[RMDB]
Notes:
Chemical mapping of a 177-nucleotide RNA with DMS and 2A3. The DMS profile rests on 4,532 reads.
RNA sequence: GGGAACGACUCGAGUAGAGUCGAAAAGACCUCGAGGUGCCACCGGACGUCGUCGACCGGGCGACGGGAUUUCUCGAGGAGAUCAGCGUCGUCCCCGACGCACGGGCGAUCCGAGAGUACGCCACCGGUGCCCAUAAAUAUUCGUAUUUAUGGGCACAAAAGAAACAACAACAACAAC
Reactivity to DMS in 0.01 (KOAc 150mM, MgCl2 10mM, bicine 150mM(pH8.5), 24C), signal-to-noise 5, nucleotides 027 to 126: g010a130c090c000u010c040g000a200g020g000u000g020c140c130a110c060c030g010g010a300c050g010u000c010g010u000c030g000a090c200c160g000g010g020c000g010a010c010g000g000g000a010u000u000u010c000u000c130g000a140g010g000a020g000a020u000c000a030g010c010g010u000c000g000u000c010c010c120c020g000a010c000g010c160a050c020g010g000g020c050g010a110u000c040c030g000a190g000a110g020u000a050c060g010c040c030a120c070c080g010
Reactivity to 2A3 in 0.01 (KOAc 150mM, MgCl2 10mM, bicine 150mM(pH8.5), 24C), signal-to-noise 4, nucleotides 027 to 126: g040a030c000c010u010c010g040a080g040g010u060g060c050c040a080c040c040g050g090a070c050g020u150c000g000u010c010g040a120c040c100g000g010g000c000g000a010c020g000g000g000a020u020u060u000c090u080c150g230a150g150g040a010g010a000u020c030a020g300c000g000u000c000g010u020c020c000c000c020g010a000c010g010c040a010c030g040g000g000c020g050a060u050c000c000g030a050g010a000g050u050a050c070g040c020c000a080c030c040g060
Annotation
The reactions ran in a buffer of 150 mM KOAc, 10 mM MgCl2 and 150 mM bicine (pH 8.5), at 24 C. Source: RMDB library OK2TRN, as collected in RNAgym. High 2A3 reactivity points to a flexible backbone, as in loops and unpaired stretches.